Structure probing data (2A3 and DMS) for a 177-nucleotide construct. Values are in units of 0.01, from 0 to 300, in steps of 10. For DMS the reverse transcriptase was MarathonRT. It was measured as part of the RMDB library M2PK50. The 2A3 profile rests on 2,373 reads. The RNA was probed in 150 mM KOAc, 10 mM MgCl2 and 150 mM bicine (pH 8.5) at 24 C.
[RMDB]
RNA sequence: GGGAACGACUCGAGUAGAGUCGAAAAUCCUUCCUUUUCGAAGGAAGGACAGUGCACAGUCUUCGGAUCUGUGAAUCACACAACAGCCGUGUCUAUGCGAGGUUUUAAUCAAGUUCGCUUGAUUAAAAACCAGAUCGAAGUUCGCUUCGAUCUGGUUAAAAGAAACAACAACAACAAC
Reactivity to 2A3 in 0.01 (KOAc 150mM, MgCl2 10mM, bicine 150mM(pH8.5), 24C), signal-to-noise 2, nucleotides 027 to 126: u020c020c000u020u010c010c000u130u030u020u090c190g130a000a000g010g020a000a020g000g010a020c000a030g120u110g030c010a000c010a010g000u030c020u090u140c120g120g000a130u060c020u000g000u030g030a070a120u170c050a030c010a010c030a100a080c020a040g000c000c020g020u000g040u050c030u060a050u040g020c040g040a040g050g060u010u000u000u100a010a010u010c000a000a000g030u020u060c070g050c070u000u000g000a000u020u010a030a000a000
Reactivity to DMS in 0.01 (KOAc 150mM, MgCl2 10mM, bicine 150mM(pH8.5), 24C), signal-to-noise 3, nucleotides 027 to 126: u000c000c000u010u010c010c000u010u000u000u010c140g010a030a010g010g000a010a000g000g000a010c100a060g010u010g010c020a030c030a010g000u000c010u000u010c060g020g000a040u010c030u010g010u000g010a110a090u010c180a170c080a060c100a070a040c100a070g010c030c020g010u000g000u010c020u000a050u010g010c030g000a080g030g000u010u000u000u000a000a000u000c000a000a010g010u000u000c200g010c000u000u000g000a020u000u000a000a000a010